[RMDB]
RNA sequence: GGGAACGACUCGAGUAGAGUCGAAAACUCGCUGACUUCCAGCGGGCGGGAAAGUCCAGACCUGCAGCGGGCCAUCGCGCGUUUUCCACCACAAAAAAAUGUCAGCGCUGGGCUCAUGUGCCUGGAGCCUUGCGGCCGGCCGCCCAGCCCCGCACCCCAUCGUACAACAGUUCGCUGUUGUACGAUGAAAAGAAACAACAACAACAAC
Reactivity to 2A3 in 0.01 (KOAc 150mM, MgCl2 10mM, bicine 150mM(pH8.5), 24C), signal-to-noise 2, nucleotides 027 to 156: c020u010c010g000c000u020g030a190c030u190u040c110c010a030g010c030g010g000g000c040g020g010g020a150a100a080g030u040c070c000a010g010a130c010c050u130g030c050a060g020c090g010g000g000c030c000a070u070c030g000c000g000c010g040u030u020u060u010c050c030a110c030c050a050c120a070a180a050a040a000a020a010u160g080u120c070a070g000c010g000c060u030g050g010g010c020u000c070a090u120g070u130g030c010c010u050g080g030a070g040c000c020u060u090g040c080g050g030c010c070g010g010c000c010g040c020c000c000a000g000c020c010c000c020g020c010a060c000c030c000